Chemical mapping of a 177-nucleotide RNA with 2A3 and DMS. The 2A3 profile rests on 3,031 reads. Source: RMDB library OK1LIB, as collected in RNAgym. Conditions: 150 mM KOAc, 10 mM MgCl2 and 150 mM bicine (pH 8.5), 24 C. For 2A3 the reverse transcriptase was SuperScript II with manganese. Values are in units of 0.01, from 0 to 300, in steps of 10. DMS adducts were read by reverse transcription with MarathonRT.
RNA sequence: GGGAACGACUCGAGUAGAGUCGAAAAGAAGUCAGAGAAAAGAUGCGAAAAGAAAAGAAUUGGCUGGGAAAAAGCAUCGAAAAGUCGUGGAAACCAGCCGAAACACGACGAAAUCUGACUGAAGAAAGGGUAAUCAUAAGUUCGCUUAUGAUUACCCAAAAGAAACAACAACAACAAC
Reactivity to 2A3 in 0.01 (KOAc 150mM, MgCl2 10mM, bicine 150mM(pH8.5), 24C), signal-to-noise 2, nucleotides 027 to 126: g090a020a000g010u000c000a000g010a000g010a020a050a060a050g010a000u000g010c010g060a110a060a050a040g220a010a130a030a010g110a040a140u120u050g010g000c000u000g000g000g040a080a160a000a000a000g000c000a000u000c020g000a000a110a010a040g010u000c000g000u000g040g040a020a000a120c010c000a000g000c000c000g000a010a010a000c010a000c000g010a000c010g000a170a030a000u000c000u000g000a000c020u020g000a030a020g110a080a070a010
Reactivity to DMS in 0.01 (KOAc 150mM, MgCl2 10mM, bicine 150mM(pH8.5), 24C), signal-to-noise 4, nucleotides 027 to 126: g020a240a030g020u000c000a010g000a030g020a150a140a160a090g000a000u000g000c000g020a080a120a130a200g000a140a120a130a140g010a120a070u000u000g000g000c030u000g020g000g030a060a070a050a110a070g000c000a000u000c000g000a070a050a090a160g000u000c000g030u000g000g000a080a080a120c010c010a000g000c000c000g010a040a060a110c000a000c000g010a000c010g000a090a130a090u020c000u000g000a000c000u010g020a080a060g000a070a110a110